Source information
This 177-nucleotide RNA was probed chemically with 2A3. Reactivities are given for positions 27 through 126. The RNA was probed in 150 mM KOAc, 10 mM MgCl2 and 150 mM bicine (pH 8.5) at 24 C.
RNA sequence: GGGAACGACUCGAGUAGAGUCGAAAAAGUGCUGGAUUUCAGACAUGGUCUUCUCUAUGGCUUUGAUGUCACUUGUUUUGAGGCGUCAGAUGAUAUUGGAGGCUUAUGGAGAUACAAAUCUCACGAAUAUACCGCCCACUUUCGAGUGGGCGGUAUAAAAAGAAACAACAACAACAAC
Reactivity to 2A3 in 0.01 (KOAc 150mM, MgCl2 10mM, bicine 150mM(pH8.5), 24C), signal-to-noise 1, nucleotides 027 to 126: a000g090u100g050c120u190g000g150a240u000u130u000c050a000g020a130c000a000u020g000g000u000c000u040u030c000u000c010u010a020u030g130g150c110u040u010u000g000a000u000g040u020c010a070c050u180u120g220u240u260u180u190g020a040g010g010c000g000u000c000a030g000a110u070g000a000u000a000u040u000g010g010a000g010g000c000u020u070a080u060g050g000a050g060a070u160a060c100a010a130a050u000c030u010c010a040c070g080a050a000